[RMDB]
RNA sequence: GGGAACGACUCGAGUAGAGUCGAAAAAUGCGUUUACAUGAAAAACGCCAUCCAGGCCAAGGGGUAUAUUGUCAUAAACCCUUUGGUCAGCACGAUUGCGACUUUCGGGCAAAGUAUGCCAUGAUGAGUGUAAAGAGUCGUUCGCGACUCUUUACACAAAAGAAACAACAACAACAAC
Reactivity to DMS in 0.01 (KOAc 150mM, MgCl2 10mM, bicine 150mM(pH8.5), 24C), signal-to-noise 2, nucleotides 027 to 126: a110u000g020c030g010u000u000u000a130c150a240u000g000a060a060a010a010a030c010g000c000c110a120u000c010c030a110g010g000c000c000a030a010g010g010g000g000u000a110u010a050u010u030g010u010c210a090u000a060a060a050c000c000c000u000u000u000g000g000u020c030a030g010c100a090c140g040a040u000u000g010c060g000a100c130u000u010u000c040g010g010g000c030a050a070a120g040u000a070u000g040c060c020a060u000g010a090u020g010a150
Reactivity to 2A3 in 0.01 (KOAc 150mM, MgCl2 10mM, bicine 150mM(pH8.5), 24C), signal-to-noise 1, nucleotides 027 to 126: a000u090g000c010g000u030u010u100a100c080a090u220g130a180a090a000a020a000c000g000c000c000a030u000c030c000a010g010g000c010c000a020a000g000g020g000g020u010a000u000a010u210u270g210u250c080a030u090a020a070a150c030c020c000u000u000u000g000g010u000c010a000g030c010a000c070g090a070u000u270g000c010g020a020c060u060u060u030c070g000g010g050c020a030a060a000g120u110a140u170g070c040c000a030u050g080a060u040g060a040
Structure probing data (DMS and 2A3) for a 177-nucleotide construct. The 2A3 profile rests on 1,086 reads. Values cover nucleotides 27 to 126.